RNA sequence: GGGAACGACUCGAGUAGAGUCGAAAACACAAUGUGCGCCAUUAACAUUGUUUAUGCAAGCACGUUUCGCAAUGUACGGCGCAGAAACGUUGCCAACACAAAUACGCUUCACGAUGUGCGGCACAGAAAAAGCUCGCGCACUUCGGUGCGCGAGCAACAAUAUUGACUUCUUCGGAAGUCAAUAUUGAAAAGAAACAACAACAACAAC
Reactivity to DMS in 0.01 (KOAc 150mM, MgCl2 10mM, bicine 150mM(pH8.5), 24C), signal-to-noise 2, nucleotides 027 to 156: c040a100c070a100a080u000g020u000g030c020g010c060c030a080u000u000a110a050c080a070u010u010g020u000u010u010a030u010g000c020a140a110g030c060a060c040g010u000u000u000c050g060c050a020a070u020g040u010a140c080g000g000c080g000c020a170g000a020a030a010c030g000u000u010g060c030c020a120a070c050a040c040a040a050a110u000a090c060g030c090u010u000c080a110c120g000a070u010g000u000g030c000g010g040c020a090c030a080g000a090a070a080a040a130g050c000u000c010g090c030g010c000a040c050u000u020c140g020g050u000g050c000g040c000g020a000g030c000a000a010
Reactivity to 2A3 in 0.01 (KOAc 150mM, MgCl2 10mM, bicine 150mM(pH8.5), 24C), signal-to-noise 4, nucleotides 027 to 156: c050a000c030a030a160u120g010u020g050c010g020c030c010a050u080u160a060a040c020a010u070u030g060u090u150u090a120u190g020c080a060a060g050c030a020c080g010u020u050u050c050g010c020a020a050u070g020u110a080c100g080g000c050g030c040a010g010a000a030a000c030g040u060u090g030c020c020a140a030c020a040c020a100a160a010u190a050c100g020c100u090u160c080a050c090g080a060u070g020u050g040c040g040g040c060a010c010a020g190a040a130a010a000a000g000c000u010c000g000c000g000c000a000c000u030u050c160g070g000u000g000c000g000c000g000a000g010c000a000a000